[RMDB]
RNA sequence: GGGAACGACUCGAGUAGAGUCGAAAAUUACCGGACCGCAAGCCCUCGCAGCUGCCGAGGCGUUCGUGGCGGCGGGUAGCGUUGCUCUGGGGGGCAUCGUCGCGCAGCUCGACCGCUUGGAUCUCGGGUACUGGUGUAGUUUCGACUACACCAGUACAAAAGAAACAACAACAACAAC
Reactivity to 2A3 in 0.01 (KOAc 150mM, MgCl2 10mM, bicine 150mM(pH8.5), 24C), signal-to-noise 3, nucleotides 027 to 126: u110u070a040c030c000g030g030a030c000c020g030c120a050a020g030c010c010c000u010c020g060c040a090g030c050u080g050c070c020g000a020g010g000c070g010u040u040c080g060u110g050g010c020g010g010c020g010g010g020u030a050g020c020g030u040u060g010c020u000c070u120g160g000g000g000g040g000c000a020u040c030g200u090c020g000c010g000c060a040g000c000u020c020g130a250c020c020g010c000u020u040g030g020a090u030c060u080c030g070g020
Reactivity to DMS in 0.01 (KOAc 150mM, MgCl2 10mM, bicine 150mM(pH8.5), 24C), signal-to-noise 4, nucleotides 027 to 126: u020u000a190c020c000g030g010a100c030c030g030c040a080a090g010c050c020c030u010c040g020c070a140g000c130u010g010c040c010g010a030g000g020c070g010u000u000c060g020u010g010g010c000g000g010c020g000g000g020u010a100g020c030g010u000u000g010c020u010c030u010g020g010g020g010g000g010c050a050u000c060g010u010c110g000c040g010c040a240g000c010u000c020g010a090c030c070g010c040u000u010g000g000a090u010c040u000c070g000g010